[RMDB]
RNA sequence: GGGAACGACUCGAGUAGAGUCGAAAAGGGGUCAUGUAAGUGAUUCUUGGAUUUAACGACCUUUUGACGAGCUGAAGCCUCCACGGCUCGAUAAGGUCGUUUGUCAGAAUCAUAUCAUGACGGAGGCACCCAAAAGCAGCAACUUCGGUUGCUGCAAGUUGGGGAGUAACUUCGGUUACUCCCCAACAAAAGAAACAACAACAACAAC
Reactivity to 2A3 in 0.01 (KOAc 150mM, MgCl2 10mM, bicine 150mM(pH8.5), 24C), signal-to-noise 1, nucleotides 027 to 156: g070g000g020g000u010c030a000u000g040u120a220a300g020u030g000a010u010u000c040u080u160g180g000a110u240u300u200a000a000c000g000a000c020c000u000u040u110u120g170a100c040g000a000g020c010u020g050a160a010g070c010c050u060c050c030a020c020g020g000c000u010c000g020a030u020a020a010g010g000u000c000g020u010u000u000g010u010c000a000g000a000a000u000c000a000u010a040u090c010a000u010g010a010c000g010g040a020g030g000c030a050c000c000c010a010a050a000a050g010c010a010g060c010a000a000c000u040u080c210g120g000u000u000g020c000u000g010c000a000a020

This 207-nucleotide RNA was probed chemically with 2A3. 2A3 adducts were read by reverse transcription with SuperScript II with manganese.